[RMDB]
RNA sequence: GGGAACGACUCGAGUAGAGUCGAAAAGAUAUGGAGACGAGCGAUAAGCCUCACUGGGUCGGAAACGACCUUGAGGCUUUUGACGCUCAACUCCUAAGUCAAAGUCGAGUGCUUCGGCACUCGACAACUGUAAUACUACGUUCGCGUAGUAUUACAGAAAAGAAACAACAACAACAAC
Reactivity to 2A3 in 0.01 (KOAc 150mM, MgCl2 10mM, bicine 150mM(pH8.5), 24C), signal-to-noise 3, nucleotides 027 to 126: g020a010u070a040u120g010g000a000g020a020c070g000a010g010c010g020a030u010a130a040g000c000c000u010c020a040c210u120g060g000g000u000c000g020g000a070a070a050c010g000a000c000c000u000u010g010a000g000g000c000u010u010u000u010g010a000c010g000c000u010c000a000a040c000u000c000c000u020a070a020g060u030c060a220a050a040g000u000c000g000a000g000u010g000c010u080u140c300g160g000c010a000c010u000c000g000a000c010a000a000
Reactivity to DMS in 0.01 (KOAc 150mM, MgCl2 10mM, bicine 150mM(pH8.5), 24C), signal-to-noise 8, nucleotides 027 to 126: g000a030u000a300u010g000g000a020g010a070c300g000a010g000c010g020a110u010a020a010g010c000c000u000c000a050c300u000g000g020g000u010c000g000g010a080a080a190c010g020a010c000c000u000u000g000a000g010g010c010u000u000u000u000g010a160c050g010c010u000c000a060a300c000u000c000c000u000a040a100g000u000c030a070a090a130g010u000c000g010a020g010u000g000c000u000u010c200g030g000c000a010c000u000c000g000a000c000a010a040